Chemical mapping of a 207-nucleotide RNA with DMS and 2A3.
2A3 adducts were read by reverse transcription with SuperScript II with manganese.
Source: RMDB library OK3TST, as collected in RNAgym.
High DMS reactivity at an A or C suggests that its Watson-Crick edge is free.
RNA sequence: GGGAACGACUCGAGUAGAGUCGAAAAGCAUUUGCAUAUUGUGUUGAUCAUUGUGGACAGAUGGACUCAUGGCACCAGACCAUCUUUUAUCGUCUUCGAGUGUGAAUGCGGAUGGAAAAGGAAUGGAAUGGAAUCCACCUAGGAGGCCCAAACAGAGCAACAUAACACUUUUCGAAGUGUUAUGUUGAAAAGAAACAACAACAACAAC
Reactivity to DMS in 0.01 (KOAc 150mM, MgCl2 10mM, bicine 150mM(pH8.5), 24C), signal-to-noise 2, nucleotides 027 to 156: g030c030a100u010u000u000g010c020a090u000a110u000u010g020u000g000u010u020g010a150u010c050a120u030u010g030u010g000g030a130c050a070g010a070u000g020g010a110c090u000c050a100u010g040g010c080a110c100c030a130g000a300c010c000a040u000c020u000u000u010u000a040u000c040g020u000c030u000u000c030g010a160g050u010g040u000g000a020a040u000g030c080g000g000a070u000g000g000a070a020a080a030g010g010a060a080u020g010g030a080a170u000g010g000a120a110u000c030c060a030c020c000u000a130g000g000a100g010g030c050c000c000a030a070a120c070a090g000a180g000
Reactivity to 2A3 in 0.01 (KOAc 150mM, MgCl2 10mM, bicine 150mM(pH8.5), 24C), signal-to-noise 5, nucleotides 027 to 156: g000c020a060u060u080u120g020c040a030u100a090u100u130g040u010g030u070u100g040a050u070c050a080u090u120g010u060g060g030a030c030a050g080a100u050g000g010a030c010u020c070a090u060g000g000c060a050c070c000a020g030a030c020c010a020u040c000u040u070u020u030a190u080c040g040u020c030u100u060c070g050a100g080u090g010u050g090a090a030u100g040c020g020g020a030u050g020g010a030a030a030a060g020g020a120a070u030g020g010a030a030u040g020g040a030a060u020c020c010a010c010c000u020a040g040g040a020g030g010c020c000c040a030a050a010c050a030g080a030g080